[RMDB]
RNA sequence: GGGAACGACUCGAGUAGAGUCGAAAAUCAGAGCCACACAAGCCUCAGUCACCAGAUUCAUCUCAAACCUCCCGUUAAUGAUUUAUGGGAGGCUUUCAUCUCCACAUGGACUGCGGAGACCUACUGUCCCUGUUUCUUGAGUGGAAAAAGAAGGUCACCCUAUUUAGCGUUUCGACGCUAAAUAGGGAAAAGAAACAACAACAACAAC
Reactivity to 2A3 in 0.01 (KOAc 150mM, MgCl2 10mM, bicine 150mM(pH8.5), 24C), signal-to-noise 3, nucleotides 027 to 156: u110c030a020g020a010g080c020c000a030c000a000c020a060a030g000c000c000u030c010a000g020u020c010a020c020c010a020g050a130u130u150c040a110u040c110u030c090a050a070a030c000c000u000c000c010c010g010u040u090a180a070u220g240a100u140u120u160a020u090g010g000g000a000g000g000c000u000u030u010c020a050u000c010u020c010c020a050c000a050u090g020g060a050c040u020g010c040g050g000a020g030a020c010c000u060a070c000u040g050u030c010c010c010u050g040u020u030u030c030u030u070g030a040g020u070g010g000a100a100a000a000a000g080a030a040g070g020u030c020a060
Reactivity to DMS in 0.01 (KOAc 150mM, MgCl2 10mM, bicine 150mM(pH8.5), 24C), signal-to-noise 1, nucleotides 027 to 156: u030c070a240g000a110g000c000c000a110c030a030c050a080a100g030c030c020u000c010a090g010u000c050a130c030c030a070g010a100u000u000c030a120u030c060u010c070a080a050a080c010c000u000c000c000c000g030u000u000a070a090u000g000a270u000u000u000a010u020g020g010g010a070g040g050c020u000u000u000c010a090u010c030u000c020c000a080c020a100u000g000g000a040c070u010g030c050g020g010a100g000a020c030c030u000a090c070u000g040u000c010c040c000u000g020u000u000u000c040u020u000g020a140g000u000g010g000a040a070a050a040a100g030a080a070g010g000u000c010a140